[RMDB]
Source information: An RNA of 177 nucleotides, treated with DMS and 2A3 and read out base by base.
RNA sequence: GGGAACGACUCGAGUAGAGUCGAAAAGUUCAUGUGUUCGCACAUGAACAAAAGACGGAGAGAAAAGCAGCAUGGACUCAACCGUCGAAAACCAAAGGUGCAAAAGUGGGGGGUUCGCCCCCCACAAGGAUAUCUUUCAGUUCGCUGAAAGAUAUCCAAAAGAAACAACAACAACAAC
Reactivity to DMS in 0.01 (KOAc 150mM, MgCl2 10mM, bicine 150mM(pH8.5), 24C), signal-to-noise 2, nucleotides 027 to 126: g000u000u000c010a000u010g000u000g000u010u000c210g060c000a010c000a000u000g000a000a000c030a060a070a110a140g000a000c040g010g030a300g010a040g000a040a080a110a060g010c060a100g000c150a120u000g010g020a300c000u000c030a070a060c010c000g060u000c020g000a040a030a100a130c010c030a050a110a100g020g000u010g000c110a060a020a080a070g030u000g010g020g000g020g000g000u000u020c190g000c000c000c000c000c000c000a000c000a010a040
Reactivity to 2A3 in 0.01 (KOAc 150mM, MgCl2 10mM, bicine 150mM(pH8.5), 24C), signal-to-noise 1, nucleotides 027 to 126: g010u020u000c010a010u000g000u010g010u030u060c140g020c030a000c000a000u000g000a000a000c000a000a000a000a030g000a000c000g000g000a010g000a020g040a050a050a050a030g000c110a020g050c000a090u090g060g030a040c000u010c000a090a190c090c020g010u010c020g000a070a060a020a010c010c010a040a040a020g120g030u210g060c050a050a040a070a060g030u000g010g000g000g010g000g000u000u010c080g060c020c020c000c000c010c000a000c000a000a000
For 2A3 the reverse transcriptase was SuperScript II with manganese. The 2A3 profile rests on 1,439 reads. Source: RMDB library M2PK50, as collected in RNAgym.